[RMDB]
RNA sequence: GGGAACGACUCGAGUAGAGUCGAAAACUUCUCCCAGGAUGAGCUUGGCGAUCCCCUGAGCGAGGAGGAGAAGGUAGGCUGACGGCUCUUGUGCUGCUGGGUGCUCUGUGGCCAUUGCCACAAUAGCCGUAUAAGGCGGAUUCGUCCGCCUUAUACGAAAAGAAACAACAACAACAAC
Reactivity to 2A3 in 0.01 (KOAc 150mM, MgCl2 10mM, bicine 150mM(pH8.5), 24C), signal-to-noise 3, nucleotides 027 to 126: c010u050u000c010u020c000c010c010a020g090g040a140u160g050a010g050c080u110u100g050g030c070g120a140u090c010c010c000c010u020g010a010g040c030g020a040g030g050a060g040g020a040g020a030a020g060g050u060a030g050g050c020u020g040a030c020g030g000c000u000c000u060u090g070u050g040c030u030g010c010u020g000g030g060u070g030c010u020c030u100g010u040g010g000c000c070a220u080u300g000c010c000a000c010a000a100u100a070g020c020
Reactivity to DMS in 0.01 (KOAc 150mM, MgCl2 10mM, bicine 150mM(pH8.5), 24C), signal-to-noise 6, nucleotides 027 to 126: c070u010u000c030u000c000c010c050a150g000g020a100u000g020a190g010c030u000u000g010g010c080g010a210u000c020c020c020c020u000g000a080g010c040g010a090g010g010a110g000g000a050g010a060a040g000g020u000a060g010g010c050u010g010a090c100g010g020c030u000c060u000u000g010u000g000c060u000g000c030u000g000g000g000u000g010c030u000c130u000g010u010g010g000c010c240a120u010u010g010c020c020a030c040a050a070u000a070g010c080